RNA sequence: GGGAACGACUCGAGUAGAGUCGAAAAGGCUGCGUGCUGGGCUUCUUAGUACGUGGCAAGAUCCAAGGAAGCUGGCAUCCCGGGUAGCGUGCGCCUGCGCGACUUGGGAGGCGAGACUCAAAACAGAACGCUAAACAUGUAGAUCUGCCCGGCGAAGCCACGGAUAGUAGUUCGCUACUAUCCGUGGAAAAGAAACAACAACAACAAC
Reactivity to 2A3 in 0.01 (KOAc 150mM, MgCl2 10mM, bicine 150mM(pH8.5), 24C), signal-to-noise 3, nucleotides 027 to 156: g120g000c000u030g010c030g000u010g020c000u010g020g040g010c030u090u040c000u020u080a010g010u020a010c000g000u020g000g000c010a010a030g050a060u070c060c020a010a020g050g000a030a020g020c050u090g050g000c070a030u000c000c000c000g000g000g030u020a020g010c020g000u030g020c090g040c020c070u160g010c010g010c010g020a020c010u020u040g000g000g010a010g000g000c010g000a010g000a030c040u060c160a040a090a050a050c060a040g060a150a040c040g030c040u120a100a100a010c040a050u100g060u150a020g000a100u000c000u040g020c000c020c000g020g000c050g030a050a000g030
Reactivity to DMS in 0.01 (KOAc 150mM, MgCl2 10mM, bicine 150mM(pH8.5), 24C), signal-to-noise 1, nucleotides 027 to 156: g000g060c030u020g060c010g000u010g000c020u080g030g000g020c110u010u000c040u000u000a110g000u000a050c070g020u000g030g020c010a050a100g020a130u020c060c080a190a170g060g000a080a070g020c050u020g020g000c020a080u020c010c000c000g000g020g040u000a040g030c020g020u000g020c150g060c180c090u010g030c020g000c000g020a050c070u000u000g010g010g000a090g040g050c020g040a170g010a130c030u000c050a020a030a070a190c070a130g000a080a070c040g030c010u060a100a080a190c040a090u000g040u000a010g010a090u000c020u010g030c020c010c000g010g000c080g010a090a230g000
This 207-nucleotide RNA was probed chemically with 2A3 and DMS. The reactions ran in a buffer of 150 mM KOAc, 10 mM MgCl2 and 150 mM bicine (pH 8.5), at 24 C. For 2A3, 2,718 sequencing reads were counted. It was measured as part of the RMDB library ARCHII. 2A3 adducts were read by reverse transcription with SuperScript II with manganese. Values cover nucleotides 27 to 156.